[RMDB]
RNA sequence: GGGAACGACUCGAGUAGAGUCGAAAAGUAAACAGGUUGAGUAGAGUGUGAGCCGCUGCGAUACCAGCUCGAUUACGAGCCCUUGGCAGCGCGUCGGAAGGACGCGUCCCUGAAUAUAAAAAAGUAAACAAUCAGAGUAGUUCGCUACUCUGAUUGUAAAAGAAACAACAACAACAAC
Reactivity to DMS in 0.01 (KOAc 150mM, MgCl2 10mM, bicine 150mM(pH8.5), 24C), signal-to-noise 4, nucleotides 027 to 126: g000u010a030a070a090c100a050g000g000u000u000g010a090g020u000a060g010a070g020u010g010u010g000a100g030c050c050g010c050u000g010c030g010a120u000a070c090c120a100g000c020u000c030g010a180u000u000a080c050g000a070g000c020c050c040u000u000g010g010c060a070g000c000g010c020g000u000c010g020g010a120a130g010g000a020c010g010c010g000u000c080c010c010u000g000a090a070u010a110u020a000a040a040a070a040a110g010u010a060a080
Reactivity to 2A3 in 0.01 (KOAc 150mM, MgCl2 10mM, bicine 150mM(pH8.5), 24C), signal-to-noise 2, nucleotides 027 to 126: g070u080a090a080a000c030a090g050g030u060u070g050a070g050u060a050g030a060g020u080g010u040g070a040g040c010c030g010c030u010g000c020g030a020u030a110c040c020a020g000c010u030c000g100a140u100u280a090c060g000a020g000c030c000c020u030u030g090g020c030a020g010c010g000c000g010u020c010g020g140a180a060g130g000a010c000g000c030g040u020c010c010c010u040g080a160a020u130a030u200a150a160a020a040a000a010g090u140a110a160